Structure probing data (2A3 and DMS) for a 177-nucleotide construct. The RNA was probed in 150 mM KOAc, 10 mM MgCl2 and 150 mM bicine (pH 8.5) at 24 C.

[RMDB]
RNA sequence: GGGAACGACUCGAGUAGAGUCGAAAACAUAAGAAUCCAGACACUGAUGCAAUUUCAUCUGCGAUUAUUAUGGCAGAAUUUGAACAACUUCGAGGUAAUUCAGGAGCCAAAGCAUACCGUUUAGGUGCUACUCCCCGUCCUUCGGGACGGGGAGUAGAAAAGAAACAACAACAACAAC
Reactivity to 2A3 in 0.01 (KOAc 150mM, MgCl2 10mM, bicine 150mM(pH8.5), 24C), signal-to-noise 3, nucleotides 027 to 126: c040a000u130a060a050g060a010a040u000c000c000a000g030a030c040a020c090u070g000a020u020g010c140a290a150u000u090u050c030a090u000c000u000g020c020g030a000u020u060a000u040u030a040u050g030g000c000a060g140a120a100u240u130u150g030a050a030c020a030a050c050u040u140c130g020a030g080g000u030a070a070u160u020c030a020g080g080a000g030c030c030a050a000a100g020c060a080u050a200c030c020g040u090u170u080a050g000g000u060g010
Reactivity to DMS in 0.01 (KOAc 150mM, MgCl2 10mM, bicine 150mM(pH8.5), 24C), signal-to-noise 1, nucleotides 027 to 126: c010a050u060a040a010g020a000a010u000c020c020a060g000a090c050a130c300u050g000a000u000g000c090a050a000u000u010u090c080a100u000c000u000g000c020g000a000u050u050a090u000u000a030u000g000g020c050a020g000a040a000u000u000u000g000a230a050c120a080a300c200u010u020c000g060a110g000g000u000a050a270u000u020c060a080g000g000a000g000c030c060a020a180a030g060c120a000u000a000c100c010g000u050u070u000a020g000g030u000g010